[RMDB]
RNA sequence: GGGAACGACUCGAGUAGAGUCGAAAAAUGCUGAGUUCUGGACAUUUGCAGUUUCUGCAGUUUGUCUCCCACCUGGAGGCAUGCACUUCAAAUGGUCUGCAGACCCCUCCUUCCAAGCUGGAUAACAGGUGGGAGGCAGGGAGCUGACCCCUCCUCACCAUUAGUGGGAUUUCGAUCCCACUAAUGGAAAAGAAACAACAACAACAAC
Reactivity to DMS in 0.01 (KOAc 150mM, MgCl2 10mM, bicine 150mM(pH8.5), 24C), signal-to-noise 1, nucleotides 027 to 156: a050u000g020c050u010g020a110g010u010u000c050u000g000g000a100c020a060u000u020u000g030c060a070g010u010u000u010c050u000g020c000a120g030u000u000u000g020u000c020u010c000c000c050a100c130c050u000g010g000a030g030g010c070a070u000g050c020a060c010u000u000c020a080a070a150u000g020g010u000c010u000g040c020a050g020a080c070c010c020c000u000c030c030u000u030c050c040a060a170g020c110u040g020g000a170u010a110a080c020a030g030g030u000g010g040g000a020g040g020c030a020g000g030g020a080g020c000u000g010a300c030c020c130c010u000c000c010u000c030a300
Reactivity to 2A3 in 0.01 (KOAc 150mM, MgCl2 10mM, bicine 150mM(pH8.5), 24C), signal-to-noise 3, nucleotides 027 to 156: a000u090g000c040u030g020a020g100u090u040c030u070g050g020a030c030a110u040u030u140g020c050a030g030u060u050u100c060u090g010c020a060g040u070u190u060g010u000c000u000c000c000c010a070c020c050u110g050g020a010g010g020c030a050u030g010c020a020c060u060u120c110a040a080a250u160g070g030u030c050u080g000c010a020g040a130c020c010c000c000u000c000c000u030u020c010c020a110a150g130c120u090g070g010a080u050a200a060c010a010g020g010u000g010g010g010a000g010g030c000a000g000g010g000a000g000c010u010g010a030c000c000c000c000u020c000c000u020c020a020